Structure probing data (DMS and 2A3) for a 177-nucleotide construct. For 2A3 the reverse transcriptase was SuperScript II with manganese. The reactions ran in a buffer of 150 mM KOAc, 10 mM MgCl2 and 150 mM bicine (pH 8.5), at 24 C. Reactivities are given for positions 27 through 126. It was measured as part of the RMDB library 15KREP. For DMS the reverse transcriptase was MarathonRT. The DMS profile rests on 1,001 reads.

RNA sequence: GGGAACGACUCGAGUAGAGUCGAAAAGCACUGAGCCGCCAGGAUGAGUCCAUAGCGAUAGGAGGGGAUGCUAGGAGUCGGCGGCGACCGAAGCGAGGGGGAAAGUAAAGAGAGCAACGGGGCUAGCCCUGAUUAGAAUCUUCGGAUUCUAAUCAGGAAAAGAAACAACAACAACAAC
Reactivity to DMS in 0.01 (KOAc 150mM, MgCl2 10mM, bicine 150mM(pH8.5), 24C), signal-to-noise 2, nucleotides 027 to 126: g020c080a130c110u000g000a140g060c000c010g060c000c010a170g000g030a160u010g000a090g020u000c000c020a030u020a080g010c040g010a200u010a070g000g020a090g030g040g010g010a060u000g010c050u000a080g030g000a050g010u010c030g000g010c020g010g020c030g000a030c110c040g010a110a080g010c070g010a130g000g000g010g000g010a080a050a050g000u010a050a090a040g010a060g010a120g020c070a050a080c050g000g000g000g000c100u000a090g000c150
Reactivity to 2A3 in 0.01 (KOAc 150mM, MgCl2 10mM, bicine 150mM(pH8.5), 24C), signal-to-noise 2, nucleotides 027 to 126: g030c010a030c120u050g020a010g000c000c010g000c020c010a030g190g040a150u210g040a040g080u010c000c030a120u050a020g010c030g100a060u060a070g050g040a060g070g000g000g000a020u060g010c020u010a000g010g010a050g060u030c060g000g040c000g000g010c010g010a020c010c020g030a050a030g010c010g010a060g000g000g000g010g030a100a010a000g030u070a030a030a040g050a010g010a000g040c010a000a040c040g000g000g030g020c010u010a010g020c000